[RMDB]
RNA sequence: GGGAACGACUCGAGUAGAGUCGAAAAUGAGACAAACACGCUUCACAAUGUGCGGCAAAGAAACAUUGUUUAUGCAAAGGCACUUGGCAAUGUGUGCUCAAACAUUGCUUAUUCAAACACGCUUCACAAAAGAAUCAGUGGUUCGCCACUGAUUCAACCAAAUAUCAUCGUUCGCGAUGAUAUUUGGAAAAGAAACAACAACAACAAC
Reactivity to DMS in 0.01 (KOAc 150mM, MgCl2 10mM, bicine 150mM(pH8.5), 24C), signal-to-noise 2, nucleotides 027 to 156: u010g010a170g010a130c100a140a100a110c080a040c040g030c010u010u020c060a070c030a020a030u000g060u000g030c010g040g010c030a120a120a110g030a060a010a030c000a020u000u000g010u000u010u000a050u010g000c040a050a090a130g010g030c020a020c030u010u010g010g000c060a050a070u000g000u010g020u000g020c090u010c060a070a140a070c020a060u000u000g000c010u020u000a080u000u000c100a090a070a120c040a120c120g020c020u000u000c040a170c070a060a040a130a140g010a010a010u000c000a030g020u000g000g010u010u010c300g000c000c010a010c000u010g000a010u010u000c000a050a110
Reactivity to 2A3 in 0.01 (KOAc 150mM, MgCl2 10mM, bicine 150mM(pH8.5), 24C), signal-to-noise 9, nucleotides 027 to 156: u160g020a020g040a040c060a020a170a000c060a010c060g000c010u010u010c020a000c000a010a020u010g000u000g000c010g030g070c080a100a090a080g070a020a050a000c010a010u010u010g090u030u090u120a090u110g050c040a050a070a050g140g000c010a010c040u060u050g010g000c000a010a000u010g010u000g030u040g030c070u080c140a050a070a010c000a010u010u010g000c000u060u070a110u120u130c050a030a080a040c050a030c120g080c050u120u140c070a050c040a120a080a040a030g000a000a000u000c000a000g000u000g040g040u030u050c210g040c050c000a000c000u000g000a000u000u000c000a000a000
The record gives the reactivity of an RNA of 207 nucleotides to DMS and 2A3. Values cover nucleotides 27 to 156. The RNA was probed in 150 mM KOAc, 10 mM MgCl2 and 150 mM bicine (pH 8.5) at 24 C. The DMS profile rests on 4,108 reads.